Source: RMDB library OK1LIB, as collected in RNAgym.
This 177-nucleotide RNA was probed chemically with 2A3.
For 2A3 the reverse transcriptase was SuperScript II with manganese.
The RNA was probed in 150 mM KOAc, 10 mM MgCl2 and 150 mM bicine (pH 8.5) at 24 C.

RNA sequence: GGGAACGACUCGAGUAGAGUCGAAAACCGGCGCAUCCGGGAUAACGCCUGCCGUUGGUGGACCAGGCGGCCAGGGUGGUGCGGGCGGCACCGGUGGCGACGGUGGUGCCGGCAUUGGUGGGGUCGGUCGGCUGCUAGUAUUCGUACUAGCAGCCGAAAAAGAAACAACAACAACAAC
Reactivity to 2A3 in 0.01 (KOAc 150mM, MgCl2 10mM, bicine 150mM(pH8.5), 24C), signal-to-noise 2, nucleotides 027 to 126: c000c000g010g000c070g000c000a040u040c000c010g000g100g000a040u080a160a040c000g020c000c000u040g040c020c020g060u130u300g140g090u280g120g010a020c240c000a010g000g000c000g000g010c000c000a040g000g010g040u090g000g100u150g030c050g070g010g000c060g000g000c010a000c000c000g040g040u100g050g040c060g020a070c000g000g060u040g000g300u040g020c000c000g010g000c030a030u040u090g090g020u090g010g040g020g000u010c010g030g010